[RMDB]
RNA sequence: GGGAACGACUCGAGUAGAGUCGAAAAGGGACUGGCCCGAUGAAGCCCGGCAACCUAACUUUAUUCAAGCGUAAAGUGAAGGUGCUAAUUCCAGCAAAAUGGUGUAUUCCGUUUUGGUAGAUAAGAGAAGCGUGACAUGAGUUCGCUCAUGUCACAAUCAACAAUACGGGUUCGCCCGUAUUGUUGAAAAAGAAACAACAACAACAAC
Reactivity to DMS in 0.01 (KOAc 150mM, MgCl2 10mM, bicine 150mM(pH8.5), 24C), signal-to-noise 2, nucleotides 027 to 156: g020g010g010a110c020u000g010g000c040c010c020g010a100u000g010a160a140g000c000c020c040g000g020c040a070a030c000c010u000a130a040c010u000u010u000a020u000u010c060a140a300g000c300g030u000a020a020a030g010u000g020a100a080g010g000u010g010c040u000a110a170u000u010c020c000a020g000c010a010a000a030a020u000g000g010u000g020u010a080u000u000c000c000g040u000u000u000u000g000g030u000a020g000a080u020a090a130g000a210g000a110a100g000c130g020u000g020a020c010a010u010g000a020g030u000u010c300g000c000u000c010a010u020g000u000c000a000c010a020a080
Reactivity to 2A3 in 0.01 (KOAc 150mM, MgCl2 10mM, bicine 150mM(pH8.5), 24C), signal-to-noise 4, nucleotides 027 to 156: g000g000g010a010c010u030g040g040c010c000c000g020a060u120g030a030a020g040c000c020c000g010g000c040a130a110c010c000u010a000a010c010u010u010u060a060u130u150c130a120a090g090c050g070u020a000a000a010g000u020g060a130a030g000g000u000g000c000u000a010a030u160u030c030c000a010g000c010a070a000a000a040u020g010g050u100g040u180a120u170u070c010c010g000u000u000u000u020g060g020u090a090g020a160u130a160a060g060a010g080a210a040g090c050g090u000g000a000c000a000u010g000a000g030u030u120c220g060c070u000c000a000u000g000u000c000a000c000a000a000